An RNA of 207 nucleotides, treated with 2A3 and read out base by base. Reactivities are given for positions 27 through 156. The RNA was probed in 150 mM KOAc, 10 mM MgCl2 and 150 mM bicine (pH 8.5) at 24 C.
RNA sequence: GGGAACGACUCGAGUAGAGUCGAAAAGGGGCUGACAGGAAUCGACAGUAGAGUGUAUCAUGUCAGUAAGCAUGCCGGGGAAUGGCGGUUUACCCCGUUAUCAAAUGAUUACCGACCAAUAAUUGGCUUAGCUCGUUGGGCUUCGGCCCAACGAGAAUCAGGUGGACAUGUUCGCAUGUCCACCUGAAAAAGAAACAACAACAACAAC
Reactivity to 2A3 in 0.01 (KOAc 150mM, MgCl2 10mM, bicine 150mM(pH8.5), 24C), signal-to-noise 1, nucleotides 027 to 156: g040g000g010g000c080u080g020a030c070a080g000g130a050a070u020c030g080a050c030a070g130u230a080g140a070g130u210g120u110a170u100c100a010u020g050u030c020a000g000u150a100a000g100c060a030u020g100c020c000g000g000g020g010a050a020u080g020g000c060g000g000u030u020u160a060c000c000c000c000g020u070u070a060u090c010a020a020a070u080g050a070u050u120a070c000c000g090a160c010c030a040a070u300a090a070u040u070g090g000c050u040u140a080g000c000u000c000g000u000u000g000g000g000c000u030u030c140g000g010c020c020c020a000a000c000g000a000g000a000a000